[RMDB]
An RNA of 177 nucleotides, treated with DMS and read out base by base. It was measured as part of the RMDB library OK2TRN. DMS adducts were read by reverse transcription with MarathonRT. DMS (dimethyl sulfate) methylates the pairing face of unpaired adenines and cytosines.
RNA sequence: GGGAACGACUCGAGUAGAGUCGAAAAUAUAUUACGUCUUGACCAAUUACGUGCCAGCAGUCGCGGUAAUACGUAAAAGACUAGUGUUAUUCAUAAGGAUUAGGUUUAAAGGGUACUUAGAUGGUCAUCGCGUACUACCGUUCGCGGUAGUACGCGAAAAAGAAACAACAACAACAAC
Reactivity to DMS in 0.01 (KOAc 150mM, MgCl2 10mM, bicine 150mM(pH8.5), 24C), signal-to-noise 1, nucleotides 027 to 126: u020a120u000a060u000u000a120c100g000u000c030u000u010g000a040c040c010a080a150u000u000a010c110g010u010g030c050c010a090g040c060a110g010u000c160g040c040g000g000u000a020a240u000a190c040g030u000a040a040a030a100g010a050c050u000a050g010u000g000u030u000a050u000u000c040a200u010a090a090g010g000a120u000u000a040g040g030u000u000u000a010a130a070g000g000g030u000a000c010u040u030a040g040a100u000g030g000u000c010a200